RNA sequence: GGGAACGACUCGAGUAGAGUCGAAAAGUACGAAUCGAGACUGCGAAAGCAAGGCCAGCGAUCCUUUGCGUAUGAACAAAUCAUACCAGAGGUGUCAGAAUAAUUACCACAGGGAUAACUGGCUUAUCCUUCGAUGUCGGCUCUUCCUAACCUAGCGCUUCUGUUUGAAGUUCGCUUCAAACAGAAGAAAAGAAACAACAACAACAAC
Reactivity to 2A3 in 0.01 (KOAc 150mM, MgCl2 10mM, bicine 150mM(pH8.5), 24C), signal-to-noise 6, nucleotides 027 to 156: g020u050a090c010g010a020a010u000c010g010a000g060a060c080u070g000c020g050a100a020a020g010c040a030a030g020g000c000c000a010g010c020g020a030u030c000c010u070u060u060g030c130g000u010a000u010g010a080a040c070a110a160a100u060c000a000u000a000c000c000a000g020a040g050g040u040g040u050c020a010g090a090a100u180a110a060u160u170a080c030c030a080c090a130g000g000g060a020u020a060a030c000u010g000g000c000u020u020a050u080c010c000u050u020c010g000a010u020g160u110c000g000g010c010u010c010u020u010c000c000u020a070a090c010c030u060a060g100c050g010
Reactivity to DMS in 0.01 (KOAc 150mM, MgCl2 10mM, bicine 150mM(pH8.5), 24C), signal-to-noise 2, nucleotides 027 to 156: g020u000a040c050g030a190a070u000c020g000a090g010a070c040u010g030c030g000a110a130a190g000c070a130a240g000g020c000c010a050g010c080g000a050u000c000c010u000u000u000g040c130g030u000a020u000g010a010a260c130a100a120a240u000c010a020u000a020c000c020a210g020a110g030g020u020g000u000c030a190g000a160a090u000a060a090u020u000a080c010c010a210c020a070g000g010g010a020u000a060a000c010u000g000g010c040u010u010a020u000c010c020u000u000c020g000a070u000g030u000c010g020g000c000u000c050u000u000c000c050u000a090a090c050c020u000a090g030c100g010